[RMDB]
RNA sequence: GGGAACGACUCGAGUAGAGUCGAAAAGGACUGCGCAGUCCGGCAACAUCAGCAGAGAGCCCGCUAUACGUGACGGAUUGGCUGAAGCGUACAGAAAUAUUGACCCUCCUGCAAGAGGCAGCCAAGCAAAACGUACGUGAGUUCGCUCACGUACGAACCUCCUAGGACAGUUCGCUGUCCUAGGAGGAAAAGAAACAACAACAACAAC
Reactivity to 2A3 in 0.01 (KOAc 150mM, MgCl2 10mM, bicine 150mM(pH8.5), 24C), signal-to-noise 2, nucleotides 027 to 156: g080g000a000c100u110g000c240g040c150a050g010u030c030c000g020g000c070a070a030c060a080u130c020a010g030c030a000g100a020g000a030g130c030c010c000g020c010u040a030u000a110c100g080u040g060a020c070g030g020a100u070u030g030g000c000u020g000a080a000g000c010g050u090a060c050a010g200a100a150a000u150a100u250u230g040a110c000c000c000u040c020c000u070g030c060a060a000g000a010g110g000c000a000g000c000c000a020a020g040c060a030a100a020a020c010g000u000a000c000g000u010g000a010g010u010u130c160g080c090u000c000a000c000g000u000a000c000g000a000a000
Structure probing data (2A3) for a 207-nucleotide construct. Reactivities are given for positions 27 through 156. The reactions ran in a buffer of 150 mM KOAc, 10 mM MgCl2 and 150 mM bicine (pH 8.5), at 24 C. Reactivities are rounded to 0.1 and cut off at 0 and 3. It was measured as part of the RMDB library M2RFPK.